This 177-nucleotide RNA was probed chemically with 2A3 and DMS. Conditions: 150 mM KOAc, 10 mM MgCl2 and 150 mM bicine (pH 8.5), 24 C. It was measured as part of the RMDB library OK2TRN. Reactivities are given for positions 27 through 126.
RNA sequence: GGGAACGACUCGAGUAGAGUCGAAAAGGAUCCUCUCACAGGAUUGACUCUGUGUUCCGAAACUCCAACAGUAUUGCUUCGGGACACCUACAGCAAUACUGUAGGUAUAGAGUGUAGGAGAGGAUCGCACGAUGAUGCCUUUCGAGGCAUCAUCGUGAAAAGAAACAACAACAACAAC
Reactivity to 2A3 in 0.01 (KOAc 150mM, MgCl2 10mM, bicine 150mM(pH8.5), 24C), signal-to-noise 2, nucleotides 027 to 126: g050g000a010u000c020c000u020c000u030c010a270c060a150g010g180a200u170u270g070a030c000u040c000u040g000u010g000u070u030c000c000g020a000a000a000c020u010c070c050a120a080c040a150g120u150a150u080u190g020c030u040u020c010g010g000g010a020c010a040c000c000u030a020c030a020g040c070a070a120u080a300c010u010g000u000a010g000g000u070a070u130a090g010a000g000u000g040u050a070g000g060a000g010a010g000g000a000u020c000g000
Reactivity to DMS in 0.01 (KOAc 150mM, MgCl2 10mM, bicine 150mM(pH8.5), 24C), signal-to-noise 3, nucleotides 027 to 126: g020g020a000u000c000c000u000c010u000c020a120c080a120g010g020a240u010u020g010a100c040u000c020u000g000u000g000u010u010c020c010g010a040a070a040c030u010c160c110a090a070c220a120g040u000a180u000u000g000c070u000u000c170g010g000g000a010c140a030c020c000u000a030c010a010g000c070a050a080u010a300c000u000g000u010a000g000g030u000a080u020a020g000a000g020u010g010u000a120g000g000a040g000a020g010g000a010u010c000g010